Conditions: 150 mM KOAc, 10 mM MgCl2 and 150 mM bicine (pH 8.5), 24 C. The record gives the reactivity of an RNA of 207 nucleotides to DMS and 2A3. Reactivities are given for positions 27 through 156. The data come from the RNA Mapping Database (RMDB), library OK3TST.
RNA sequence: GGGAACGACUCGAGUAGAGUCGAAAAGGGUUUGAGCCAUCGCCCGAAUAAGAUGGAUGAUACAAGUCGGCAUUGUACGCGACGUAGUACGUACUCAUUAGUGCGAAAGCACGGUUAGUCCGACUUGGCAGGGACGAUCUUCUGUCAAUACUUAGAAGAUUACGAUUUAUUUCGAUAAAUCGUAAUCAAAAGAAACAACAACAACAAC
Reactivity to DMS in 0.01 (KOAc 150mM, MgCl2 10mM, bicine 150mM(pH8.5), 24C), signal-to-noise 6, nucleotides 027 to 156: g010g000g020u000u000u000g000a140g000c040c030a060u000c030g020c030c020c010g000a110a130u000a070a100g010a100u010g010g020a080u000g000a160u000a050c020a030a030g010u010c000g010g010c080a270u000u000g020u000a030c040g020c020g010a150c160g050u000a140g030u000a020c010g010u000a030c020u000c180a130u000u000a110g040u000g020c000g010a130a100a290g020c010a010c000g010g000u000u000a140g010u000c000c000g020a050c010u000u000g010g010c070a100g000g020g010a060c050g010a080u010c050u000u000c040u000g000u000c030a080a120u000a080c070u000u000a130g000a140a200
Reactivity to 2A3 in 0.01 (KOAc 150mM, MgCl2 10mM, bicine 150mM(pH8.5), 24C), signal-to-noise 9, nucleotides 027 to 156: g040g020g010u060u090u150g100a030g020c010c000a020u020c010g010c000c010c010g020a070a110u170a070a040g010a010u010g030g020a030u100g010a030u080a090c040a020a010g000u000c000g010g000c050a060u050u150g010u020a010c020g040c060g060a070c100g020u010a030g030u030a030c010g000u010a010c010u030c080a090u050u130a050g000u000g000c010g040a090a010a000g000c000a000c000g000g030u040u070a030g020u010c000c000g000a000c000u000u000g000g000c010a020g010g010g020a050c080g070a120u020c030u150u010c030u060g030u010c000a050a060u100a160c070u120u140a050g020a190a010